[RMDB]
RNA sequence: GGGAACGACUCGAGUAGAGUCGAAAACGACAUGGGCGUCACCCAUAUCAUUCGCGGCGACGACCAUCUCACCAACGCCGCGCGCCAGACGAUCAUCUAUAAUGCCAUGGGCUGGGACGUACCGCAACGUCACUCCUGAUUUCGAUCAGGAGUGACGAAAAGAAACAACAACAACAAC
Reactivity to 2A3 in 0.01 (KOAc 150mM, MgCl2 10mM, bicine 150mM(pH8.5), 24C), signal-to-noise 2, nucleotides 027 to 126: c030g100a000c020a140u110g020g000g010c030g040u040c010a050c040c020c010a020u040a020u030c010a080u060u160c040g000c040g010g010c010g020a040c010g020a020c100c040a130u050c030u030c020a090c030c040a000a050c000g000c000c030g000c000g010c020g010c010c000a070g010a100c050g020a100u080c010a000u030c070u150a130u050a170a040u060g040c060c040a050u060g000g030g000c030u080g060g010g070a020c010g030u050a290c030c010g000c060a050a050
Reactivity to DMS in 0.01 (KOAc 150mM, MgCl2 10mM, bicine 150mM(pH8.5), 24C), signal-to-noise 2, nucleotides 027 to 126: c070g000a080c130a050u000g000g010g010c020g000u000c050a120c020c010c010a070u000a120u000c080a110u000u000c080g000c040g010g020c000g010a040c150g030a090c030c040a050u000c080u010c040a120c070c070a100a240c050g020c010c060g000c000g000c100g000c060c040a040g010a070c120g000a090u010c090a090u010c060u000a080u000a090a020u000g000c020c050a080u000g020g000g030c230u000g000g000g010a020c030g010u000a090c070c070g000c110a030a070

Source: RMDB library OK2TST, as collected in RNAgym. Chemical mapping of a 177-nucleotide RNA with 2A3 and DMS. Reactivities are given for positions 27 through 126. The RNA was probed in 150 mM KOAc, 10 mM MgCl2 and 150 mM bicine (pH 8.5) at 24 C.